This 177-nucleotide RNA was probed chemically with DMS. Reactivities are given for positions 27 through 126.
RNA sequence: GGGAACGACUCGAGUAGAGUCGAAAAUUCAGGGUAUGGUACCAUUUGUUUUUGUGGGAACAAAGGACAGCAUCGCUAAUGCCACUGUUCUUUUGGAUUAUCACCUGAACUAUUUAAAGGUGAGAACGUCCGCAAUCAUAUUCGUAUGAUUGCGGACAAAAGAAACAACAACAACAAC
Reactivity to DMS in 0.01 (KOAc 150mM, MgCl2 10mM, bicine 150mM(pH8.5), 24C), signal-to-noise 1, nucleotides 027 to 126: u000u000c070a060g000g020g030u000a090u000g010g030u020a120c040c000a070u010u000u000g040u010u000u010u010u000g030u000g010g050g010a130a080c090a050a030a060g000g000a000c020a000g030c060a090u000c300g040c050u010a080a140u000g020c040c170a080c070u000g010u000u010c010u000u000u000u000g010g000a170u000u000a090u000c020a040c000c010u000g010a070a100c290u020a050u000u000u010a100a170a070g000g000u000g000a030g010a070a050c250